About this RNA
Chemical mapping of a 177-nucleotide RNA with DMS and 2A3. The RNA was probed in 150 mM KOAc, 10 mM MgCl2 and 150 mM bicine (pH 8.5) at 24 C. The data come from the RNA Mapping Database (RMDB), library TTRDES. Values cover nucleotides 27 to 126.
[RMDB]
RNA sequence: GGGAACGACUCGAGUAGAGUCGAAAAGAUAUGGAAGUAGUGCUUUUGACGGAACGUGGUCGGAAACGACCAUACGUUCCGAUAAGCACGCUUCCUAAGUCAAAACCUAUAAGUUCGCUUAUAGGAACAUCUAGGUAUACUUCGGUAUACCUAGAUGAAAAGAAACAACAACAACAAC
Reactivity to DMS in 0.01 (KOAc 150mM, MgCl2 10mM, bicine 150mM(pH8.5), 24C), signal-to-noise 7, nucleotides 027 to 126: g010a040u010a300u010g000g000a010a010g010u000a080g060u000g010c000u000u000u000u010g020a260c130g000g000a010a010c000g030u000g000g000u000c000g010g000a070a060a130c000g010a010c000c010a030u010a020c090g010u000u000c000c000g010a020u010a010a010g000c000a010c000g000c000u000u000c000c000u000a010a070g000u000c020a110a090a120a210c010c000u000a010u000a010a010g010u010u010c300g010c010u000u000a010u000a010g000g000a120a190
Reactivity to 2A3 in 0.01 (KOAc 150mM, MgCl2 10mM, bicine 150mM(pH8.5), 24C), signal-to-noise 8, nucleotides 027 to 126: g010a010u040a030u090g010g020a020a020g010u300a120g010u160g000c030u100u160u300u300g300a300c120g000g000a010a000c010g000u010g000g000u010c000g010g000a030a040a040c000g000a000c000c000a010u090a010c010g000u000u000c000c000g000a010u010a000a000g000c000a000c000g000c000u000u000c000c000u010a050a000g010u000c030a010a010a110a250c000c000u000a000u000a020a020g060u030u220c300g040c160u000u010a010u010a010g010g010a020a040